The record gives the reactivity of an RNA of 177 nucleotides to 2A3. The data come from the RNA Mapping Database (RMDB), library RFM100. The 2A3 profile rests on 547 reads.
[RMDB]
RNA sequence: GGGAACGACUCGAGUAGAGUCGAAAACUUACAUCUUGAUGAAGAGGAAUGGGAAGCCGAAAUCUAAACUGAAACAGAGGCGUCACCCAAUUAUCAAUUGGUAAGUGAUAUCUAUGUUUCGAUCUGUAUAGGAGUCCUCUUUCGAGAGGACUCCUAUAAAAGAAACAACAACAACAAC
Reactivity to 2A3 in 0.01 (KOAc 150mM, MgCl2 10mM, bicine 150mM(pH8.5), 24C), signal-to-noise 1, nucleotides 027 to 126: c000u030u030a020c000a150u000c010u110u080g060a020u140g030a080a000g130a090g020g090a020a020u100g060g000g060a000a000g010c000c000g000a020a080a090u090c060u080a020a300a080c110u080g100a010a000a000c110a000g050a000g050g040c000g000u050c000a010c030c000c000a000a000u100u030a180u090c060a060a000u020u020g000g010u180a050a010g000u000g000a000u020a000u000c000u000a010u020g000u000u000u030c050g000a020u040c020u020g000u030